[RMDB]
The record gives the reactivity of an RNA of 207 nucleotides to 2A3 and DMS. The DMS profile rests on 5,153 reads. 2A3 adducts were read by reverse transcription with SuperScript II with manganese.
RNA sequence: GGGAACGACUCGAGUAGAGUCGAAAAGUUCAUCCCCUGAUCAAGGAUGCCCGAAACGGUGAGGCGGAAAGGAAAUUAAAUAACGUCAACCCAUCGGGACGGUUGGCCAGUUAAGAAGUGAGGAUUCAAAAGAUCGAACCGUUCGCGGUUCGAUCAACUAAAUGAGGAAGUUCGCUUCCUCAUUUAGAAAAGAAACAACAACAACAAC
Reactivity to 2A3 in 0.01 (KOAc 150mM, MgCl2 10mM, bicine 150mM(pH8.5), 24C), signal-to-noise 8, nucleotides 027 to 156: g040u060u080c020a030u030c020c000c000c010u040g020a070u040c020a030a020g040g000a040u070g040c010c000c010g020a050a070a010c050g020g020u050g030a170g030g000c050g030g090a100a060a040g150g080a060a070a060u200u180a070a080a090u200a090a010c010g010u000c000a000a010c000c000c010a030u050c020g010g020g020a010c000g020g020u010u010g010g010c030c030a060g010u040u090a120a050g040a070a010g050u070g070a060g090g040a050u080u070c080a060a040a030a060g000a000u000c000g000a000a000c010c000g010u050u050c220g010c010g080g000u000u000c000g000a000u000c000a000a000
Reactivity to DMS in 0.01 (KOAc 150mM, MgCl2 10mM, bicine 150mM(pH8.5), 24C), signal-to-noise 3, nucleotides 027 to 156: g000u000u000c020a100u000c020c000c010c030u010g030a080u000c060a140a100g000g010a150u010g010c060c000c040g020a060a110a120c120g030g030u000g010a150g030g010c020g000g000a080a120a120g010g000a060a140a100u000u010a040a070a130u000a090a140c090g020u000c010a050a060c020c010c010a140u000c030g030g020g030a120c060g020g010u000u010g010g010c030c040a090g010u000u010a070a090g010a080a120g000u000g000a100g030g010a130u000u000c070a080a090a090a090g020a030u000c010g010a010a020c000c000g040u000u030c300g040c010g040g000u000u000c000g010a010u000c010a010a080
DMS adducts were read by reverse transcription with MarathonRT. The 2A3 profile rests on 8,106 reads.